The data come from the RNA Mapping Database (RMDB), library OK2TRN. This 177-nucleotide RNA was probed chemically with DMS and 2A3. The RNA was probed in 150 mM KOAc, 10 mM MgCl2 and 150 mM bicine (pH 8.5) at 24 C. Values cover nucleotides 27 to 126.

RNA sequence: GGGAACGACUCGAGUAGAGUCGAAAAGGUGUGACCAUGCCAAUAUACCAACUGAAAAUCAGCCCUAGUUAUAGGUCAUUUCCUUAAUCUAAAGGUACAAUCAGCUCUAAUGGAAGCACGGGAACUGAAUCCUCAUGGAUUUCGAUCCAUGAGGAUUAAAAGAAACAACAACAACAAC
Reactivity to DMS in 0.01 (KOAc 150mM, MgCl2 10mM, bicine 150mM(pH8.5), 24C), signal-to-noise 4, nucleotides 027 to 126: g000g030u010g010u000g000a160c020c010a080u010g010c040c070a090a180u000a090u000a110c080c040a040a080c040u010g010a050a050a100a130u010c090a100g000c050c010c030u010a050g010u010u010a100u010a060g010g020u020c170a070u010u010u010c010c010u000u010a100a070u010c070u000a030a060a070g000g000u000a060c160a040a070u010c030a030g010c040u010c050u000a080a060u000g000g010a120a120g010c050a010c060g000g010g010a080a070c090u000g000
Reactivity to 2A3 in 0.01 (KOAc 150mM, MgCl2 10mM, bicine 150mM(pH8.5), 24C), signal-to-noise 3, nucleotides 027 to 126: g070g000u020g010u010g030a040c010c030a010u090g040c020c010a110a010u140a010u030a130c020c050a120a130c080u080g100a090a090a100a160u100c030a020g040c020c000c000u020a020g010u120u110a160u110a140g000g020u030c020a020u080u090u050c030c000u060u060a050a020u020c020u090a140a020a000g030g000u100a040c050a030a150u050c020a010g000c010u000c010u130a100a100u070g040g010a020a000g000c020a020c090g050g010g000a070a020c020u080g050